[RMDB]
RNA sequence: GGGAACGACUCGAGUAGAGUCGAAAAGAUAUGGAGCAGUAUGCCGAUCCGAGGAUCUCGGAAACGAGGGAGGAUCGGAACUACAUAAACUGCUCCUAAGUCAAAUCUACUCGUUCGCGAGUAGAAAUCUGAUAACUACCUUCGGGUAGUUAUCAGAAAAAGAAACAACAACAACAAC
Reactivity to 2A3 in 0.01 (KOAc 150mM, MgCl2 10mM, bicine 150mM(pH8.5), 24C), signal-to-noise 1, nucleotides 027 to 126: g020a040u080a020u110g020g000a000g010c000a000g000u020a020u100g130c040c010g000a010u000c000c000g040a270g050g030a010u000c000u000c020g000g050a120a060a060c020g010a000g000g010g020a010g000g000a000u000c030g000g000a010a020c010u070a000c010a000u140a050a300a050c000u000g000c000u000c000c000u020a110a000g000u000c030a040a040a110u000c000u010a000c000u010c010g060u040u110c300g070c000g100a000g000u010a020g000a060a040a000
Reactivity to DMS in 0.01 (KOAc 150mM, MgCl2 10mM, bicine 150mM(pH8.5), 24C), signal-to-noise 1, nucleotides 027 to 126: g000a070u010a300u000g010g000a040g010c030a050g010u000a040u000g020c090c000g000a000u000c000c000g020a140g000g020a010u010c000u000c000g000g010a060a060a210c020g010a040g000g000g010a030g050g000a050u000c000g000g000a030a000c110u050a300c020a030u000a010a050a160c000u000g010c000u000c000c010u010a030a060g010u010c030a070a170a180u000c000u000a010c000u000c010g010u000u000c200g010c010g010a050g000u000a000g000a000a040a040

Structure probing data (2A3 and DMS) for a 177-nucleotide construct. DMS adducts were read by reverse transcription with MarathonRT. For 2A3 the reverse transcriptase was SuperScript II with manganese. The RNA was probed in 150 mM KOAc, 10 mM MgCl2 and 150 mM bicine (pH 8.5) at 24 C. The data come from the RNA Mapping Database (RMDB), library TTRDEL. The DMS profile rests on 993 reads.